[RMDB]
This 177-nucleotide RNA was probed chemically with DMS and 2A3. Source: RMDB library OK1LIB, as collected in RNAgym. Conditions: 150 mM KOAc, 10 mM MgCl2 and 150 mM bicine (pH 8.5), 24 C.
RNA sequence: GGGAACGACUCGAGUAGAGUCGAAAAGCCGCUUUUGAGAGAGAUGUGAGUGGCCCGUCUCGCUGUAGUGAAGGUGCCCUGCGCCCUUUCGUUUUAUUCGACGUGUGCAGUCUGAGUAUGUUGCGGCGUGUAUUAUUAAAUUCGUUUAAUAAUACACAAAAGAAACAACAACAACAAC
Reactivity to DMS in 0.01 (KOAc 150mM, MgCl2 10mM, bicine 150mM(pH8.5), 24C), signal-to-noise 9, nucleotides 027 to 126: g000c010c000g010c010u010u010u020u010g000a100g010a060g000a050g010a050u010g020u010g010a090g030u020g010g000c020c010c020g000u010c010u010c020g010c110u020g000u030a090g010u010g010a080a070g000g000u020g010c020c010c060u000g000c040g000c030c030c020u000u010u010c020g010u010u020u010u010a060u020u010c030g000a020c100g010u020g020u010g010c070a080g000u010c020u010g010a070g010u000a040u010g010u010u000g010c010g000g010c080
Reactivity to 2A3 in 0.01 (KOAc 150mM, MgCl2 10mM, bicine 150mM(pH8.5), 24C), signal-to-noise 9, nucleotides 027 to 126: g020c000c010g030c060u120u140u190u210g160a160g010a020g000a020g020a060u130g050u050g070a060g030u090g040g000c000c010c010g060u030c000u010c020g070c060u110g060u200a120g020u050g140a080a040g050g050u130g030c020c010c030u060g030c040g010c030c000c000u030u070u030c020g020u030u080u070u090a130u040u070c020g010a010c020g040u070g030u060g060c030a020g010u010c040u030g020a030g030u070a100u190g070u050u050g030c010g020g000c020